Overview
Structure probing data (DMS and 2A3) for a 207-nucleotide construct. The reactions ran in a buffer of 150 mM KOAc, 10 mM MgCl2 and 150 mM bicine (pH 8.5), at 24 C.
RNA sequence: GGGAACGACUCGAGUAGAGUCGAAAAAAAGAUGGCAUGUCAGAUUUCAUGUGUACGAAUACAGUACAGUACCUAAUUCGUGAUAAGAAAGUCAAUGCAGUGGUUAACAUGCGUUCAAAUGACGUGGUCUUCGGAUUCCGUAAUGAUUAUGCAUGGCGUACUUUCCUUAAUUCGUUAAGGAAAGUACAAAAGAAACAACAACAACAAC
Reactivity to DMS in 0.01 (KOAc 150mM, MgCl2 10mM, bicine 150mM(pH8.5), 24C), signal-to-noise 5, nucleotides 027 to 156: a050a050a110g000a120u000g020g000c010a080u000g010u000c050a100g010a170u000u000u000c030a090u000g030u000g020u000a040c030g010a120a130u000a130c150a090g020u010a050c060a130g010u000a070c070c010u000a080a100u000u000c030g030u000g020a100u000a050a100g010a050a050a090g030u000c040a050a090u000g020c050a090g030u010g030g010u010u000a050a070c030a030u000g020c010g000u000u000c100a060a090a110u000g010a030c020g020u010g030g020u000c020u000u010c190g040g000a110u000u000c050c000g030u000a050a090u000g000a110u010u000a050u000g010c000a040u000g000g020c130
Reactivity to 2A3 in 0.01 (KOAc 150mM, MgCl2 10mM, bicine 150mM(pH8.5), 24C), signal-to-noise 9, nucleotides 027 to 156: a000a000a000g090a030u080g030g000c020a000u020g020u070c030a020g040a140u030u060u070c060a060u090g070u020g020u080a020c020g040a080a050u110a090c050a040g040u030a030c020a030g050u060a040c030c020u050a060a050u030u060c030g020u020g040a040u050a130a040g070a120a030a010g050u060c030a010a030u050g010c000a020g040u040g030g030u070u040a070a010c010a020u020g000c020g010u020u040c020a040a130a120u150g030a030c020g060u120g000g010u000c010u030u050c180g100g010a050u220u080c020c000g000u020a040a060u070g080a030u070u120a020u160g020c020a010u020g030g000c030
The 2A3 profile rests on 10,895 reads. 2A3 is a SHAPE reagent: it acylates the 2'-hydroxyl of flexible nucleotides of all four kinds.